[RMDB]
RNA sequence: GGGAACGACUCGAGUAGAGUCGAAAAUGAGCAGGACCUCAUCCUCAUGGAAUCUCCACUUGGUGCGGGGAUAGACAUUUGAUGUAGGGAGAACAGGGGGAGUGGCAACAUCCCACCUGACUUUGGGGGUGUGUCGGGAAGGUUCUCAGCAGACAGAAGGGAAAAUAAAUUUCGAUUUAUUUUCCCUAAAAGAAACAACAACAACAAC
Reactivity to DMS in 0.01 (KOAc 150mM, MgCl2 10mM, bicine 150mM(pH8.5), 24C), signal-to-noise 1, nucleotides 027 to 156: u000g020a100g000c020a070g000g010a170c020c040u000c020a070u000c010c060u000c060a120u000g010g010a170a110u000c010u000c000c020a090c030u000u020g040g030u000g010c030g020g040g010g000a120u000a040g010a170c050a040u000u000u010g010a090u020g020u000a080g020g040g000a100g010a040a120c050a120g010g030g040g020g000a060g020u000g020g000c110a130a070c010a010u000c050c000c000a040c010c020u000g000a060c080u010u010u000g040g000g010g010g020u020g010u000g000u000c050g030g030g010a050a030g030g020u000u000c010u050c020a050g020c010a080g000a110c040a110g010a230
Reactivity to 2A3 in 0.01 (KOAc 150mM, MgCl2 10mM, bicine 150mM(pH8.5), 24C), signal-to-noise 2, nucleotides 027 to 156: u110g000a030g010c020a020g060g050a040c020c000u030c000a030u020c010c050u070c030a040u020g070g030a050a040u000c030u000c020c000a090c030u060u140g130g000u150g110c060g000g000g000g010a000u030a080g110a020c010a010u080u070u120g040a030u060g080u130a050g010g070g020a040g010a070a110c050a020g000g000g010g000g030a030g010u060g070g000c000a060a050c000a060u040c000c000c000a100c020c030u030g050a100c070u040u090u050g060g010g000g010g010u010g010u010g010u000c040g040g030g000a050a010g050g000u050u010c070u010c020a040g070c000a070g010a090c180a040g110a100
Background
Structure probing data (DMS and 2A3) for a 207-nucleotide construct. For DMS the reverse transcriptase was MarathonRT. The 2A3 profile rests on 1,089 reads. It was measured as part of the RMDB library OK3TST. The reactions ran in a buffer of 150 mM KOAc, 10 mM MgCl2 and 150 mM bicine (pH 8.5), at 24 C. 2A3 adducts were read by reverse transcription with SuperScript II with manganese.